RNA sequence: GGGAACGACUCGAGUAGAGUCGAAAAAAUGGCACAUUAGUGGUUGCCCUUUGCUUCUCUUACCCACAGUAAACUCCACCUAUUGGAUGCCAUGACUGUUCACCAAGAGAAAACAUGGAACAGCAGGCCCUAUUUAUCUUUUCGAAGAUAAAUAGGGAAAAGAAACAACAACAACAAC
Reactivity to DMS in 0.01 (KOAc 150mM, MgCl2 10mM, bicine 150mM(pH8.5), 24C), signal-to-noise 9, nucleotides 027 to 126: a050a030u000g010g010c010a050c070a110u010u000a110g030u010g000g010u010u000g010c030c010c060u000u000u000g000c100u000u000c020u000c030u010u000a140c060c030c040a080c130a070g010u010a050a060a120c100u000c020c020a060c140c090u000a100u010u000g010g000a090u000g010c020c030a060u000g010a090c030u000g000u000u000c040a120c100c090a060a080g010a120g000a070a050a060a110c130a060u000g000g010a040a030c030a020g010c120a110g000g000
Reactivity to 2A3 in 0.01 (KOAc 150mM, MgCl2 10mM, bicine 150mM(pH8.5), 24C), signal-to-noise 8, nucleotides 027 to 126: a000a000u060g000g010c020a030c010a060u070u120a070g070u040g090g050u080u050g030c010c000c000u050u060u070g020c020u050u040c030u000c000u050u070a100c010c020c020a040c030a040g060u110a040a110a070c040u000c020c000a050c020c040u080a110u080u090g080g020a050u090g020c010c010a070u060g060a160c010u010g000u000u040c040a050c070c040a090a010g090a010g000a140a110a010a000c060a060u130g030g010a010a010c000a010g010c020a020g050g030